[RMDB]
RNA sequence: GGGAACGACUCGAGUAGAGUCGAAAACAAAAACAAAACACGGAUAACAAAACGCAGAUCCGACACGUUGCAAAGAAAGCAACGAAUAACUGCGAAACAAGCUGUUAAGAAGAACAGCAAAACAAAAGCUGACACUUACGUUCGCGUAAGUGUCAGCAAAAGAAACAACAACAACAAC
Reactivity to 2A3 in 0.01 (KOAc 150mM, MgCl2 10mM, bicine 150mM(pH8.5), 24C), signal-to-noise 1, nucleotides 027 to 126: c040a000a030a000a000a000c030a000a180a140a000c130a050c160g000g000a000u010a070a070c010a050a280a100a000c030g000c000a000g000a000u000c000c000g000a000c000a000c150g000u030u000g000c000a300a000a000g110a150a030a000g080c000a000a010c000g000a000a000u130a240a000c000u000g000c030g080a210a080a000c050a130a000g000c000u000g000u020u020a130a300g040a280a000g050a150a150c000a000g000c000a000a000a000a000c070a000a000a000a000

Notes
Chemical mapping of a 177-nucleotide RNA with 2A3. The data come from the RNA Mapping Database (RMDB), library OK1LIB.